An RNA of 177 nucleotides, treated with DMS and 2A3 and read out base by base.

RNA sequence: GGGAACGACUCGAGUAGAGUCGAAAAUCAUUGCUUGUUGCCGCUGCUUGUUCGGUAUGUUGGUUGCUGCCGUGCUGCCUGAUGUUGCUGUUGCUGUUGCUGUUGGUAUUGCCACUGCAACUGCAACCUUGGGUGACUAAUUCGUUAGUCACCCAAGAAAAGAAACAACAACAACAAC
Reactivity to DMS in 0.01 (KOAc 150mM, MgCl2 10mM, bicine 150mM(pH8.5), 24C), signal-to-noise 3, nucleotides 027 to 126: u010c070a110u000u000g010c060u000u010g010u010u000g010c040c040g020c040u000g010c040u000u000g010u010u000c060g020g000u010a040u010g010u000u010g010g010u000u000g020c040u000g020c040c040g020u000g010c060u010g010c040c030u010g000a080u010g010u000u000g010c060u000g020u000u000g000c000u000g010u000u000g010c000u010g000u010u000g010g020u010a160u010u010g000c000c010a020c010u000g000c000a010a010c010u000g000c010a020a020c040
Reactivity to 2A3 in 0.01 (KOAc 150mM, MgCl2 10mM, bicine 150mM(pH8.5), 24C), signal-to-noise 2, nucleotides 027 to 126: u080c010a030u000u110g020c000u040u070g060u080u090g040c060c010g010c010u000g030c000u060u070g070u080u000c020g010g030u110a110u100g070u040u050g100g000u060u020g000c010u030g000c000c030g020u030g010c020u060g020c020c050u060g020a090u080g030u120u060g030c040u060g000u020u000g000c020u020g000u010u010g000c000u040g050u290u040g040g000u100a180u220u300g040c010c000a000c000u010g000c030a000a000c010u020g020c010a010a000c000
DMS (dimethyl sulfate) methylates the pairing face of unpaired adenines and cytosines.
For 2A3 the reverse transcriptase was SuperScript II with manganese.
The reactions ran in a buffer of 150 mM KOAc, 10 mM MgCl2 and 150 mM bicine (pH 8.5), at 24 C.